[RMDB]
RNA sequence: GGGAACGACUCGAGUAGAGUCGAAAAAUAAAUCCCUAAAGAAAGUGGGUGCGCGUUUGGCGCAUCAACUCGGGUGGAACCGCGGGAGCUACGCUCUCGUCCCGAGAAAACUCCAAUACAAAAAAAAACAUAAAUUACGAUUCGUCGUAAUUUAUGUAAAAGAAACAACAACAACAAC
Reactivity to 2A3 in 0.01 (KOAc 150mM, MgCl2 10mM, bicine 150mM(pH8.5), 24C), signal-to-noise 2, nucleotides 027 to 126: a010u090a010a030a020u060c000c000c000u090a080a110a050g130a100a060a010g100u130g050g040g000u010g000c000g000c020g030u080u160u240g210g000c000g000c000a000u000c000a000a000c000u000c000g000g050g000u100g140g110a050a060c140c000g020c020g010g000g000a010g000c040u180a060c240g000c010u020c000u000c000g000u020c000c000c010g020a010g000a010a000a000a000c040u050c040c030a080a060u180a270c160a100a070a020a020a030a000a000a000
Reactivity to DMS in 0.01 (KOAc 150mM, MgCl2 10mM, bicine 150mM(pH8.5), 24C), signal-to-noise 2, nucleotides 027 to 126: a090u020a090a100a100u020c000c000c000u010a090a130a110g000a080a050a110g010u000g020g000g030u000g000c000g020c040g000u000u010u010g010g030c010g030c000a000u000c000a030a030c020u010c020g000g040g010u000g010g000a120a130c200c080g000c010g000g000g000a020g000c010u010a100c210g000c000u010c010u000c000g010u020c010c000c010g020a030g010a080a040a030a140c160u010c030c060a070a050u000a090c050a000a000a050a040a080a060a130a070